[RMDB]
RNA sequence: GGGAACGACUCGAGUAGAGUCGAAAAAUACACCAGCAGUAGGACUCAGCGACCGUCACAACAAGGUUGUGGUGGUAUCCGACGGUCGUAUAGCCCUGUCUUGCAGGUUGCCUUGCACUGACGUGCCACACCAUUUACAGAUUCGUCUGUAAAUGAACCAUUACGUAUCCUUCGGGAUACGUAAUGGAAAAGAAACAACAACAACAAC
Reactivity to 2A3 in 0.01 (KOAc 150mM, MgCl2 10mM, bicine 150mM(pH8.5), 24C), signal-to-noise 4, nucleotides 027 to 156: a000u120a000c050a010c020c010a010g050c040a020g020u050a010g000g020a030c020u040c150a010g000c000g000a010c000c000g000u020c010a030c000a090a180c070a150a160g170g000u040u070g060u100g020g050u040g030g070u080a090u040c040c050g010a000c000g000g000u000c000g010u070a060u100a080g060c010c000c000u030g110u120c030u060u130g030c010a020g010g040u050u090g010c000c000u030u100g000c000a010c040u120g090a070c100g030u060g030c030c020a080c020a040c020c000a000u000u000u000a000c000a000g030a030u020u100c160g100u000c110u010g000u000a000a000a000u000g000a030a030
Reactivity to DMS in 0.01 (KOAc 150mM, MgCl2 10mM, bicine 150mM(pH8.5), 24C), signal-to-noise 2, nucleotides 027 to 156: a100u010a090c090a280c040c020a170g070c030a030g010u000a040g000g010a040c010u010c300a190g020c010g030a040c000c000g010u000c000a260c170a060a040c050a100a090g050g000u010u000g000u010g000g030u000g040g050u000a030u000c040c020g020a030c010g020g000u000c010g050u000a160u010a050g000c010c000c080u020g000u000c040u010u000g050c010a080g030g050u000u000g000c020c190u000u020g000c020a140c040u010g010a070c110g010u010g000c010c060a020c010a040c050c010a050u000u000u000a010c000a000g060a080u000u010c300g000u010c000u000g000u000a010a020a010u010g010a070a140
Structure probing data (2A3 and DMS) for a 207-nucleotide construct. Reactivities are given for positions 27 through 156. DMS adducts were read by reverse transcription with MarathonRT. The RNA was probed in 150 mM KOAc, 10 mM MgCl2 and 150 mM bicine (pH 8.5) at 24 C.